[RMDB]
Chemical mapping of a 177-nucleotide RNA with 2A3 and DMS. For 2A3, 5,316 sequencing reads were counted. It was measured as part of the RMDB library M2PK50. 2A3 adducts were read by reverse transcription with SuperScript II with manganese.
RNA sequence: GGGAACGACUCGAGUAGAGUCGAAAACGUCCUAGUUUCGACUAGGACGAAAUAAAAUCAGCGGUAAAUAAUCGAGGCGUAUUACCGCUGAACCCCUCGAUAAAAUGCGAUGAUUCGUCAUCGCAAACUAACAAGGAGACUUCGGUCUCCUUGUUAGAAAAGAAACAACAACAACAAC
Reactivity to 2A3 in 0.01 (KOAc 150mM, MgCl2 10mM, bicine 150mM(pH8.5), 24C), signal-to-noise 4, nucleotides 027 to 126: c000g020u000c010c000u000a010g000u030u080u060c220g090a020c000u010a010g010g030a000c000g000a010a010a000u100a000a040a000a060u010c000a000g010c000g010g000u040a050a090a110u120a100a110u210c120g080a100g130g040c090g020u020a030u030u000a000c000c010g010c000u000g000a000a000c000c000c000c020u030c030g040a040u110a150a180a020a040u080g010c010g000a000u000g010a010u040u050c190g030u010c080a000u000c000g000c010a010a000a010
Reactivity to DMS in 0.01 (KOAc 150mM, MgCl2 10mM, bicine 150mM(pH8.5), 24C), signal-to-noise 3, nucleotides 027 to 126: c010g010u000c000c010u020a000g010u010u000u020c170g030a030c000u000a010g000g000a020c000g010a000a050a070u000a050a050a180a140u000c010a000g000c010g000g010u000a010a040a070u000a080a070u010c050g010a040g030g000c070g010u000a050u000u000a020c000c000g010c000u010g000a000a100c030c000c000c070u020c120g010a130u020a050a060a100a120u000g000c000g000a000u000g010a030u010u000c220g030u000c010a020u000c000g030c000a000a020a100

The RNA was probed in 150 mM KOAc, 10 mM MgCl2 and 150 mM bicine (pH 8.5) at 24 C.